[RMDB]
RNA sequence: GGGAACGACUCGAGUAGAGUCGAAAAUUUGGCAGUUAAUAUGAGCCUACACCAUUCUUCAAUUGCGUGAGUUUUAACUACAACCACAAAGACUCUGGGUUUCUUAGUACCAUUACGUGUCAUAUUCGCCAAAACUUGGUUUCGACCAAGUUUUGGCAAAAGAAACAACAACAACAAC
Reactivity to 2A3 in 0.01 (KOAc 150mM, MgCl2 10mM, bicine 150mM(pH8.5), 24C), signal-to-noise 2, nucleotides 027 to 126: u140u030u040g020g000c040a020g080u080u060a070a040u160a230u090g050a020g010c000c000u040a050c040a000c000c000a010u130u040c080u210u070c040a190a160u240u060g130c100g000u020g000a170g000u000u000u010u000a050a110c050u060a060c140a130a030c020c000a010c000a000a130a000g000a000c040u000c010u010g010g010g000u030u090u010c000u160u100a100g000u040a010c010c000a050u020u180a020c080g110u100g000u080c000a000u050a030u120u270c140